Annotation:
This 177-nucleotide RNA was probed chemically with 2A3 and DMS. The data come from the RNA Mapping Database (RMDB), library OK2TRN. For 2A3 the reverse transcriptase was SuperScript II with manganese.
[RMDB]
RNA sequence: GGGAACGACUCGAGUAGAGUCGAAAAAUGGGAUAACGGACGCAUGACCUGUAUGCGCUGGAAUUCUGCUACCGAUUUGCCGGUUGUGUUCCGCGUUAUGCCGGACGGCAAAGAGCAACUGGUUAACACAACAUAACCGGUUCGCCGGUUAUGUUGUAAAAGAAACAACAACAACAAC
Reactivity to 2A3 in 0.01 (KOAc 150mM, MgCl2 10mM, bicine 150mM(pH8.5), 24C), signal-to-noise 3, nucleotides 027 to 126: a000u100g030g020g040a000u030a050a010c030g000g300a030c020g020c010a000u030g140a240c010c060u070g050u240a010u010g010c000g000c010u010g000g030a020a020u040u000c000u030g070c040u090a070c010c000g100a120u070u000u270g010c030c020g010g030u000u020g000u000g030u100u030c030c020g000c020g020u130u080a110u170g040c060c000g030g020a030c050g060g080c110a090a090a050g050a030g000c010a000a010c000u010g020g010u020u080a130a020c050
Reactivity to DMS in 0.01 (KOAc 150mM, MgCl2 10mM, bicine 150mM(pH8.5), 24C), signal-to-noise 4, nucleotides 027 to 126: a100u000g000g010g010a050u010a020a300c010g000g000a140c020g020c010a010u010g000a190c200c170u000g010u010a060u000g000c020g020c020u020g010g010a140a030u010u000c020u000g040c120u000a240c020c020g010a180u010u010u010g000c040c000g010g010u000u000g010u000g010u010u000c020c130g000c080g010u000u010a050u020g000c080c040g010g000a060c050g020g000c120a040a080a150g000a110g020c050a030a040c010u000g010g010u000u000a050a080c260